[RMDB]
RNA sequence: GGGAACGACUCGAGUAGAGUCGAAAAGGGUUUCAAGAUGAGAGGUCCUCGUUGCUGUUAUGAAACAAGAGGAACUUCAGUAUUAUGUCUUGUUAGAAAGGGAUCCAGGAUCCUGGUAGCUGAUCUCCAAGGUGCUAUAGCAAUUACAUUGUAAUGACUAAUAUGCAGUCUUCGGACUGCAUAUUAGAAAAGAAACAACAACAACAAC
Reactivity to 2A3 in 0.01 (KOAc 150mM, MgCl2 10mM, bicine 150mM(pH8.5), 24C), signal-to-noise 2, nucleotides 027 to 156: g080g000g000u100u060u020c010a010a040g020a040u100g020a030g000a000g130g040u000c000c020u060c080g120u060u060g030c060u100g030u300u110a200u300g110a040a070a060c010a060a070g000a020g010g030a090a090c000u000u010c050a010g020u070a090u300u060a070u120g040u000c000u070u050g000u040u020a070g030a000a000a010g070g010g010a010u060c030c040a010g000g070a000u020c030c010u000g000g050u010a000g000c010u030g010a070u040c020u000c050c020a000a050g070g000u020g070c000u140a090u110a170g000c010a050a000u080u040a060c080a150u090u090g050u180a070a050u100g000a000
Reactivity to DMS in 0.01 (KOAc 150mM, MgCl2 10mM, bicine 150mM(pH8.5), 24C), signal-to-noise 2, nucleotides 027 to 156: g010g020g020u000u010u000c050a040a060g010a050u010g010a210g000a080g040g020u000c010c020u000c020g010u010u000g020c010u000g020u000u000a090u000g030a180a060a090c030a030a100g000a070g020g010a020a060c050u000u000c060a100g000u000a120u000u020a090u000g020u000c060u000u000g020u000u000a110g000a080a080a170g020g040g010a090u000c020c070a100g000g000a070u000c000c010u000g030g020u000a090g020c060u010g000a070u010c040u010c000c030a060a240g010g030u000g000c030u000a120u000a110g020c050a000a080u010u000a050c060a300u010u010g010u010a050a100u000g000a300